The record gives the reactivity of an RNA of 177 nucleotides to 2A3 and DMS. For 2A3 the reverse transcriptase was SuperScript II with manganese. The 2A3 profile rests on 2,722 reads. The RNA was probed in 150 mM KOAc, 10 mM MgCl2 and 150 mM bicine (pH 8.5) at 24 C. The DMS profile rests on 1,243 reads. DMS adducts were read by reverse transcription with MarathonRT.
RNA sequence: GGGAACGACUCGAGUAGAGUCGAAAACUCCAUUGCUUCGGCAAUGGAGAAACAGGACGUGAGACCGAAACGGACGUAGGUCCAACUACCUUCUCACAAAAAAAACGCUUAGGUUCGCCUAAGCGAACUCCCGAAUAUUCUUCGGAAUAUUCGGGAGAAAAGAAACAACAACAACAAC
Reactivity to 2A3 in 0.01 (KOAc 150mM, MgCl2 10mM, bicine 150mM(pH8.5), 24C), signal-to-noise 1, nucleotides 027 to 126: c010u000c000c010a010u010u000g030c000u020u060c200g100g000c010a000a000u000g000g010a010g020a000a010a010c050a030g030g040a030c100g030u020g000a030g010a000c010c030g020a090a080a020c100g030g030a000c040g070u190a040g000g220u000c000c000a050a040c040u150a040c000c010u020u020c010u010c000a010c000a010a070a060a050a000a000a000a030c010g000c000u010u010a000g000g010u030u040c160g040c030c000u000a000a000g010c000g000a000a010
Reactivity to DMS in 0.01 (KOAc 150mM, MgCl2 10mM, bicine 150mM(pH8.5), 24C), signal-to-noise 2, nucleotides 027 to 126: c010u010c000c000a010u000u000g000c000u000u030c180g030g020c000a010a000u000g010g020a020g010a010a030a080c140a110g000g000a130c300g030u010g000a020g010a020c040c030g000a060a180a120c300g000g010a000c000g020u000a130g000g010u000c000c020a050a130c100u030a050c000c020u020u000c000u000c010a000c020a000a000a010a060a040a170a060a200c020g000c000u000u000a000g000g000u000u010c230g020c010c000u000a000a000g000c020g000a050a050